Structure probing data (DMS and 2A3) for a 177-nucleotide construct. Source: RMDB library OK1LIB, as collected in RNAgym. The RNA was probed in 150 mM KOAc, 10 mM MgCl2 and 150 mM bicine (pH 8.5) at 24 C. For 2A3, 21,677 sequencing reads were counted.
[RMDB]
RNA sequence: GGGAACGACUCGAGUAGAGUCGAAAAGACCGUCAGUUAGACGGAAGAAGUGCAUAAAUCCACAACGGAAGACGAGAUAUUGCACAAAUGUGGAUAAGCGUACGGAUCUACGUGCGCUAAACGUGAGCAUCCUACCUAAUUUCGAUUAGGUAGGAUGAAAAGAAACAACAACAACAAC
Reactivity to DMS in 0.01 (KOAc 150mM, MgCl2 10mM, bicine 150mM(pH8.5), 24C), signal-to-noise 9, nucleotides 027 to 126: g010a140c010c010g010u010c000a170g010u050u050a120g000a020c010g000g000a080a090g010a080a130g020u010g010c010a050u010a050a090a070u000c000c040a060c060a110a300c100g020g050a110a080g010a080c210g000a230g010a070u010a070u030u000g000c020a030c010a060a080a060u020g010u010g000g000a100u010a060a050g000c000g000u000a000c010g010g000a150u090c210u040a080c010g030u000g010c000g000c000u010a000a050a040c120g000u020g000a100g000
Reactivity to 2A3 in 0.01 (KOAc 150mM, MgCl2 10mM, bicine 150mM(pH8.5), 24C), signal-to-noise 9, nucleotides 027 to 126: g110a020c000c010g000u010c000a060g040u090u290a060g000a010c030g080g030a010a020g100a040a020g020u050g000c050a060u080a120a200a020u020c010c010a020c040a150a080c080g110g060a080a070g060a060c090g010a020g020a170u100a050u100u150g020c030a010c020a020a060a040u150g020u020g030g060a030u040a150a000g000c000g000u000a000c000g010g050a040u060c050u150a070c040g010u000g000c000g000c000u010a010a020a000c060g060u060g050a020g020